[RMDB]
RNA sequence: GGGAACGACUCGAGUAGAGUCGAAAAUAAGCCCCUCGUUAGGUGAGGCGGCUACACGAACAUAGGCCACUGACCCCGAACGUCGAGAGACGCCCCGGGUCAGGACAGCUCUUCCCGGCUUAAGGGUAAAAUCACAACGUCUUCGGACGUUGUGAAAGAGAACUCACAGUUUCGACUGUGAGUUCUCAAAAGAAACAACAACAACAAC
Reactivity to 2A3 in 0.01 (KOAc 150mM, MgCl2 10mM, bicine 150mM(pH8.5), 24C), signal-to-noise 1, nucleotides 027 to 156: u100a030a040g010c030c000c020c000u000c000g140u100u270a170g020g150u160g060a040g000g030c170g020g000c030u070a030c030a010c060g210a240a010c030a230u180a120g250g000c050c000a030c020u010g010a000c000c010c000c010g140a120a000c010g010u000c000g000a020g000a010g010a180c000g030c000c000c000c000g000g010g000u000c000a010g010g010a000c070a010g030c010u020c000u010u010c000c000c000g080g010c040u070u120a040a060g020g000g030u080a070a060a000a080u020c010a000c000a000a000c000g000u010c000u060u070c110g060g000a010c000g000u000u000g000u010g010a010a020a000